[RMDB]
RNA sequence: GGGAACGACUCGAGUAGAGUCGAAAAGAAAGAAAGAAAGAGUAAGACCAAGCUCAGUGUGCCAUUUCCUUGUCUGUAGCCAUGUCUAUGGGCUCUUGAGUUGGCCAUCUGAGCGAGGGCCUGCUAAGGGCAUUCAAAAAUUCGUUUUUGAAUGCCCAAAAGAAACAACAACAACAAC
Reactivity to DMS in 0.01 (KOAc 150mM, MgCl2 10mM, bicine 150mM(pH8.5), 24C), signal-to-noise 3, nucleotides 027 to 126: g010a110a100a120g000a050a080a120g010a110a080a050g030a050g000u010a030a060g000a300c020c010a050a300g000c030u000c000a020g040u010g000u020g000c000c010a020u010u040u010c030c230u030u020g010u000c020u000g010u000a000g000c030c300a170u030g000u040c020u010a020u000g000g000g020c000u000c080u000u010g020a040g020u000u000g010g040c000c010a030u020c010u000g010a010g010c000g010a230g000g000g050c080c010u000g000c020u000a120a110
Reactivity to 2A3 in 0.01 (KOAc 150mM, MgCl2 10mM, bicine 150mM(pH8.5), 24C), signal-to-noise 6, nucleotides 027 to 126: g120a010a050a000g110a050a080a000g110a050a140a010g120a010g030u110a170a010g010a030c000c010a020a000g000c000u000c000a000g030u010g100u220g080c000c010a020u070u060u050c020c010u030u020g000u000c010u010g020u000a010g000c060c160a270u230g040u040c000u010a020u010g010g010g010c010u040c040u110u160g030a070g010u030u010g000g000c000c000a070u080c030u010g000a000g000c000g010a010g000g000g000c010c010u010g010c000u040a060a060
The record gives the reactivity of an RNA of 177 nucleotides to DMS and 2A3. 2A3 adducts were read by reverse transcription with SuperScript II with manganese. Values cover nucleotides 27 to 126.